The record gives the reactivity of an RNA of 207 nucleotides to DMS. For DMS, 8,136 sequencing reads were counted. Conditions: 150 mM KOAc, 10 mM MgCl2 and 150 mM bicine (pH 8.5), 24 C. For DMS the reverse transcriptase was MarathonRT. The data come from the RNA Mapping Database (RMDB), library RNAMAK.
RNA sequence: GGGAACGACUCGAGUAGAGUCGAAAAUUGGUGUUCGCACCAAAGAGUGCCGUAGGGACCCGAAAGUUCAUCGAUCAUACAUCACAGUUCGAAAGAGUCACAGUGUAUGGGAGAAUGAGUAGGGUCCCUAAACGGAAUAGAUGAGCUUCGGCUCAAAUUAACAUCUUUACUUCGGUAAAGAUGUUAAAAAAGAAACAACAACAACAAC
Reactivity to DMS in 0.01 (KOAc 150mM, MgCl2 10mM, bicine 150mM(pH8.5), 24C), signal-to-noise 4, nucleotides 027 to 156: u000u000g030g020u000g020u000u010c150g040c040a060c030c030a100a050a110g010a210g040u000g000c030c020g030u010a030g000g030g000a020c010c000c010g000a170a170a300g020u000u000c000a180u000c140g000a210u010c000a030u000a020c010a030u000c050a180c110a140g010u010u000c010g010a140a120a190g010a060g010u000c020a140c150a150g020u000g010u000a010u000g010g010g000a080g020a040a020u000g000a100g000u000a170g000g000g010u000c000c000c000u000a000a000a040c040g010g010a050a060u000a120g010a140u010g000a060g030c010u000u020c300g040g010c010u000c020a000a060a130